[RMDB]
RNA sequence: GGGAACGACUCGAGUAGAGUCGAAAAGGCCCAGAUUCUGUAUCCUCAGAGUGAGACCGAAUUUUGGCAGAGAGGGGGGGACGAUGCGGAACUGGAAGAGCUCAUGGCUGGGGUACGGCUGUCGUACCAGCUAAUAGUCUUUCGAGACUAUUAGCUGAAAAGAAACAACAACAACAAC
Reactivity to DMS in 0.01 (KOAc 150mM, MgCl2 10mM, bicine 150mM(pH8.5), 24C), signal-to-noise 9, nucleotides 027 to 126: g020g010c030c010c020a120g010a070u000u000c020u000g010u000a060u010c040c030u000c090a100g010a300g020u010g010a070g010a090c050c050g010a080a090u000u000u000u000g010g010c050a080g010a140g000a080g010g010g010g000g000g000g010a070c080g000a070u000g010c060g010g010a060a050c080u010g000g000a100a060g000a090g000c030u000c050a050u010g000g010c040u000g000g010g000g010u000a020c030g010g000c130u010g010u000c030g010u010a080c100
Reactivity to 2A3 in 0.01 (KOAc 150mM, MgCl2 10mM, bicine 150mM(pH8.5), 24C), signal-to-noise 5, nucleotides 027 to 126: g120g000c000c020c000a010g020a050u060u040c010u030g030u050a080u120c000c020u070c040a040g050a040g140u090g030a050g060a040c020c040g040a030a030u060u060u090u150g080g010c060a010g060a000g030a040g080g040g000g000g000g000g000a020c030g020a020u080g030c030g040g010a040a040c030u040g020g020a070a020g020a060g040c020u020c060a040u070g160g000c030u020g010g000g000g000u010a010c010g010g000c050u050g010u050c000g000u010a060c030
Chemical mapping of a 177-nucleotide RNA with DMS and 2A3. The 2A3 profile rests on 9,409 reads. For DMS the reverse transcriptase was MarathonRT.